[RMDB]
RNA sequence: GGGAACGACUCGAGUAGAGUCGAAAACAACACGAAGCCGAAGCAACUUCAGGUCGCCGCGCACGAACUGGCGCUCGAACUCCCCCUCGCUCGAGUAGGUUUCCCCGGGGAUCCCUCUACGAGCCCUUGCCACCAAACAGGAAUGUCACGUAGUCUACAGAUAACGUAUGUUCGCAUACGUUAUCUGAAAAGAAACAACAACAACAAC
Reactivity to 2A3 in 0.01 (KOAc 150mM, MgCl2 10mM, bicine 150mM(pH8.5), 24C), signal-to-noise 1, nucleotides 027 to 156: c040a010a000c090a010c120g090a040a000g000c040c000g080a060a020g040c060a060a080c060u050u020c050a060g060g060u040c020g030c020c030g000c030g030c000a130c110g080a270a020c170u170g020g000c060g030c010u030c050g100a160a140c050u060c030c010c000c000c000u030c000g040c040u010c000g040a040g000u060a050g010g180u000u010u020c000c000c000c000g020g040g000g010a060u040c010c020c010u030c040u040a020c040g000a010g000c050c000c000u010u080g010c000c000a030c000c010a030a160a100c010a020g050g040a020a020u130g070u100c020a010c100g000u000a000g020u070c000u060a060